This 177-nucleotide RNA was probed chemically with DMS and 2A3.
The RNA was probed in 150 mM KOAc, 10 mM MgCl2 and 150 mM bicine (pH 8.5) at 24 C.
The 2A3 profile rests on 18,752 reads.
[RMDB]
RNA sequence: GGGAACGACUCGAGUAGAGUCGAAAAAGUAUCGGGUUCGCCCGAUACUAGAGCACCACUCCUGCCGGAGUUAAGGCCAAACGCACAGGCGGGUGCAAAGCCAACUCAAGGGUUUCGACCCUUGAAAGAUUUAUGUAGAGUUCGCUCUACAUAAAUCAAAAGAAACAACAACAACAAC
Reactivity to DMS in 0.01 (KOAc 150mM, MgCl2 10mM, bicine 150mM(pH8.5), 24C), signal-to-noise 9, nucleotides 027 to 126: a030g010u000a000u000c000g000g000g020u000u010c260g020c000c000c000g010a000u000a000c000u000a020g010a200g010c030a030c010c020a120c030u000c010c000u010g010c290c120g000g010a060g010u000u020a080a110g010g010c040c070a050a080a120c130g010c140a090c090a080g000g010c100g010g000g010u000g000c030a070a090a150g000c040c040a090a110c170u000c000a000a000g010g000g010u000u000u010c190g000a050c000c000c000u000u000g000a020a080a080
Reactivity to 2A3 in 0.01 (KOAc 150mM, MgCl2 10mM, bicine 150mM(pH8.5), 24C), signal-to-noise 5, nucleotides 027 to 126: a000g000u000a000u010c000g000g020g020u040u060c200g070c020c000c000g000a000u000a000c000u000a000g010a020g000c010a010c030c010a100c010u020c010c010u120g160c100c130g050g020a070g030u040u150a060a020g110g000c010c000a080a090a040c100g010c050a050c020a110g060g000c020g030g010g000u010g000c000a040a040a010g070c020c010a060a050c040u010c020a000a000g030g000g000u020u050u120c190g090a050c000c000c000u000u000g000a000a000a010
High DMS reactivity at an A or C suggests that its Watson-Crick edge is free. Reactivities are given for positions 27 through 126. For 2A3 the reverse transcriptase was SuperScript II with manganese.